[RMDB]
This 207-nucleotide RNA was probed chemically with 2A3.
For 2A3 the reverse transcriptase was SuperScript II with manganese.
The 2A3 profile rests on 679 reads.
The RNA was probed in 150 mM KOAc, 10 mM MgCl2 and 150 mM bicine (pH 8.5) at 24 C.
Reactivities are given for positions 27 through 156.
It was measured as part of the RMDB library PDB130.

RNA sequence: GGGAACGACUCGAGUAGAGUCGAAAAGAUCACUGGUCUGUAGGUUUAUUUGACAAAAUAGUGACCUGCCGCUACCAUCCGUUGGAUAAUGGCUGAACGCCUCUAAGUCAGAAUCCAUUCUAGAAACGCAAACCAAAUGCUUUAGAGUGUGAAUGUUCAAGGAAAGGAUGUUCGCAUCCUUUCCUUGAAAAGAAACAACAACAACAAC
Reactivity to 2A3 in 0.01 (KOAc 150mM, MgCl2 10mM, bicine 150mM(pH8.5), 24C), signal-to-noise 2, nucleotides 027 to 156: g040a040u080c030a010c090u020g000g000u000c010u010g060u050a000g000g030u060u070u030a110u020u040u130g140a140c090a060a110a010a010u070a060g070u040g100a010c000c000u020g010c000c000g000c030u050a040c000c050a030u090c080c010g110u090u070g010g000a000u000a070a030u070g020g000c010u020g050a160a010c050g130c070c000u000c050u060a020a080g000u030c010a000g010a060a080u000c010c010a020u080u000c060u120a050g130a050a100a000c090g000c060a040a060a010c060c020a160a040a110u110g010c010u040u100u080a060g050a010g080u050g000u030g010a110a030u110g020u000u000